[RMDB]
This 177-nucleotide RNA was probed chemically with 2A3 and DMS.

RNA sequence: GGGAACGACUCGAGUAGAGUCGAAAAAACGAAUUUUAGCUUAUUGGGUUGGGAGUCUCCGUUUUCUAAGAAAUUUACGGCAUCCUGAUUAAGAACGCUGAAUUUUUAAUCUAAAAAUCAGGUUCACCGAAUUAAGAAUAUUCGUAUUCUUAAUUCGAAAAGAAACAACAACAACAAC
Reactivity to 2A3 in 0.01 (KOAc 150mM, MgCl2 10mM, bicine 150mM(pH8.5), 24C), signal-to-noise 5, nucleotides 027 to 126: a000a000c070g030a050a020u090u080u070u070a070g020c020u060u060a060u170u160g090g000g010u040u030g020g020g000a050g040u030c030u010c050c000g010u020u020u060u020c040u070a130a020g070a070a080a040u140u160u090a020c010g010g000c000a030u000c010c010u030g020a050u050u080a110a020g010a020a000c050g030c160u000g030a040a040u000u000u000u010u070a090a120u080c090u150a000a010a020a030a030u030c010a010g000g050u010u010c010a010c030
Reactivity to DMS in 0.01 (KOAc 150mM, MgCl2 10mM, bicine 150mM(pH8.5), 24C), signal-to-noise 4, nucleotides 027 to 126: a050a050c090g010a070a040u010u010u020u010a080g010c050u000u010a090u010u020g010g010g010u010u010g010g000g000a060g000u010c080u010c030c030g000u000u000u010u010c030u020a100a110g020a060a080a050u020u010u010a050c040g010g000c300a080u000c000c020u000g000a070u020u020a030a090g000a020a030c120g010c060u000g010a050a020u020u000u000u000u030a060a090u040c080u030a020a030a030a030a020u010c020a020g010g000u000u000c020a080c220
Reactivities are given for positions 27 through 126. High 2A3 reactivity points to a flexible backbone, as in loops and unpaired stretches. The reactions ran in a buffer of 150 mM KOAc, 10 mM MgCl2 and 150 mM bicine (pH 8.5), at 24 C.